[RMDB]
RNA sequence: GGGAACGACUCGAGUAGAGUCGAAAACAGGAUGGACCGCAUCCUCGCUGACCACAUGCUCAGAUGUGGCUUCCUGGACUCCGCCUCUGAGCUGGCAGCUAGCGCUAACAUUGAGGAUCUGGUAGACUCUCAAGUAGGGAUUCGUCCCUACUUGAGAAAAAGAAACAACAACAACAAC
Reactivity to 2A3 in 0.01 (KOAc 150mM, MgCl2 10mM, bicine 150mM(pH8.5), 24C), signal-to-noise 3, nucleotides 027 to 126: c000a030g060g040a070u150g060g090a040c020c020g020c050a020u000c010c010u000c030g000c010u060g090a300c020c010a050c040a120u190g010c000u000c020a000g000a020u010g020u010g000g000c020u020u030c030c110u060g000g040a050c070u000c010c010g010c000c000u030c000u020g030a020g010c000u020g020g020c020a010g020c040u080a040g050c050g020c180u110a140a050c030a180u030u140g030a000g000g010a000u000c000u000g010g000u040a050g070a060c020
Reactivity to DMS in 0.01 (KOAc 150mM, MgCl2 10mM, bicine 150mM(pH8.5), 24C), signal-to-noise 4, nucleotides 027 to 126: c090a050g010g000a080u000g010g000a070c050c030g030c220a140u000c000c010u010c050g000c040u000g000a140c020c030a090c190a040u000g010c010u000c040a020g000a020u000g010u000g020g010c170u000u000c040c070u010g010g000a100c120u000c020c010g010c020c020u000c000u010g010a030g010c000u000g000g000c050a040g000c040u000a050g010c120g000c090u000a080a100c150a140u010u000g020a050g000g000a040u000c020u000g000g010u000a070g000a140c130